[RMDB]
About this RNA: An RNA of 177 nucleotides, treated with 2A3 and DMS and read out base by base.
RNA sequence: GGGAACGACUCGAGUAGAGUCGAAAACUAUGCGGCUCUGUCCCGUAGCUCCCACUUGGGUGGGCCACUUGGGGUAGCCAACAUUCUGGGUGGCAUCGCUGGGUAUGAGGACACUAAGAUGCUCCGCCAAAAGACGACGAUUCGUCGUCGUCUUUUGAAAAGAAACAACAACAACAAC
Reactivity to 2A3 in 0.01 (KOAc 150mM, MgCl2 10mM, bicine 150mM(pH8.5), 24C), signal-to-noise 6, nucleotides 027 to 126: c040u050a070u160g030c050g010g000c010u010c050u180g070u100c000c000c000g010u020a020g030c040u040c000c020c000a040c070u070u110g200g010g010u050g020g040g000c000c010a020c010u010u020g020g010g000g010u050a030g110c060c030a030a030c020a080u060u020c030u050g040g000g000u010g000g000c020a130u120c030g010c060u070g000g000g050u090a070u140g070a140g050g030a010c020a020c060u100a100a040g020a070u050g010c070u020c000c010g010c010
Reactivity to DMS in 0.01 (KOAc 150mM, MgCl2 10mM, bicine 150mM(pH8.5), 24C), signal-to-noise 4, nucleotides 027 to 126: c050u000a020u020g010c060g000g010c030u010c100u010g000u020c010c010c010g020u000a050g020c190u020c010c010c000a120c120u010u030g000g010g020u000g000g020g000c020c030a010c020u000u010g000g010g020g000u000a070g010c150c140a080a100c100a040u000u010c000u020g000g000g000u000g010g000c030a050u010c020g010c030u000g000g010g000u010a040u030g010a110g010g000a050c040a110c100u020a100a090g020a090u000g010c120u000c010c000g000c060
For 2A3, 11,241 sequencing reads were counted. For 2A3 the reverse transcriptase was SuperScript II with manganese. The reactions ran in a buffer of 150 mM KOAc, 10 mM MgCl2 and 150 mM bicine (pH 8.5), at 24 C. For DMS the reverse transcriptase was MarathonRT.